[RMDB]
RNA sequence: GGGAACGACUCGAGUAGAGUCGAAAACGAAGACAAUCGGCACCGUACCAUGCAACUUACGCACCACAGCGGCCAUGUCAUCGAAGGUCGACACCGUAGUAUCACCGAUCUUGACGACGACGUCGCAGUGCGUCACGUCAUUCGUGACGUGACGCACAAAAGAAACAACAACAACAAC
Reactivity to DMS in 0.01 (KOAc 150mM, MgCl2 10mM, bicine 150mM(pH8.5), 24C), signal-to-noise 1, nucleotides 027 to 126: c050g020a120a170g010a050c110a110a090u000c040g030g000c020a040c030c020g030u000a020c020c060a120u010g020c030a040a020c090u020u000a040c120g020c030a070c040c050a110c150a030g020c000g000g020c020c070a100u000g000u000c020a010u010c040g000a050a070g000g000u000c010g000a080c170a080c040c080g000u030a070g000u050a050u000c060a040c050c000g020a040u000c020u010u000g000a070c010g000a060c070g020a080c160g040u000c020g050c100a170
Reactivity to 2A3 in 0.01 (KOAc 150mM, MgCl2 10mM, bicine 150mM(pH8.5), 24C), signal-to-noise 2, nucleotides 027 to 126: c000g030a000a010g160a050c030a120a140u050c020g010g050c000a010c040c000g030u100a090c010c000a060u170g040c000a050a050c030u110u080a080c110g020c000a020c030c060a100c030a030g040c020g040g010c000c000a110u170g020u020c000a030u020c070g190a020a030g000g050u010c000g040a030c000a070c090c050g100u120a040g050u070a150u220c020a000c050c060g010a020u000c000u000u090g040a050c060g000a020c000g000a010c040g040u060c010g000c020a030